About this RNA:
Structure probing data (DMS and 2A3) for a 207-nucleotide construct. For DMS, 2,257 sequencing reads were counted.

RNA sequence: GGGAACGACUCGAGUAGAGUCGAAAACAUGGUUCUGAUCAUCUGAAGAUCAGCUAUUAGAAGAGAAAGAUCAGUUAAGUCCUUUGGACCUGAUCAGCUUGAUACAAGAACUACUGAUUUCAACUUCAAAACGGGUGCUACUUCGGUAGCACCCGAAGUUCAGAUACAUCUUCGGAUGUAUCUGAACAAAAGAAACAACAACAACAAC
Reactivity to DMS in 0.01 (KOAc 150mM, MgCl2 10mM, bicine 150mM(pH8.5), 24C), signal-to-noise 1, nucleotides 027 to 156: c080a140u010g010g010u000u020c010u000g000a010u000c020a060u000c100u000g010a240a210g000a020u000c000a010g070c200u000a050u010u010a120g010a070a060g010a080g000a140a210a070g000a000u010c010a030g000u000u000a080a050g010u000c020c000u000u040u000g030g010a040c060c010u010g010a230u020c170a070g020c060u000u020g020a090u000a040c080a010a060g000a060a010c010u000a070c030u000g000a010u000u020u000c010a090a280c030u010u000c000a040a050a150a190c050g000g030g010u000g000c000u000a030c000u000u010c300g030g000u000a010g000c000a000c010c010c010g000a000a020
Reactivity to 2A3 in 0.01 (KOAc 150mM, MgCl2 10mM, bicine 150mM(pH8.5), 24C), signal-to-noise 6, nucleotides 027 to 156: c030a050u090g000g030u130u070c000u010g020a010u010c010a030u020c070u180g130a150a050g010a050u020c010a000g000c000u090a120u230u160a070g060a100a010g040a020g050a080a170a010g010a010u010c010a000g020u070u170a180a010g000u030c000c000u070u150u300g030g000a020c010c010u060g000a090u040c010a010g040c010u040u070g020a020u040a130c060a090a010g010a060a010c030u070a020c050u080g030a070u040u070u080c070a110a070c030u110u050c050a030a060a110a060c010g000g000g010u000g000c010u000a010c000u030u030c160g100g000u000a000g000c000a000c000c000c000g000a000a000

For 2A3, 4,301 sequencing reads were counted. High 2A3 reactivity points to a flexible backbone, as in loops and unpaired stretches. Conditions: 150 mM KOAc, 10 mM MgCl2 and 150 mM bicine (pH 8.5), 24 C. For DMS the reverse transcriptase was MarathonRT.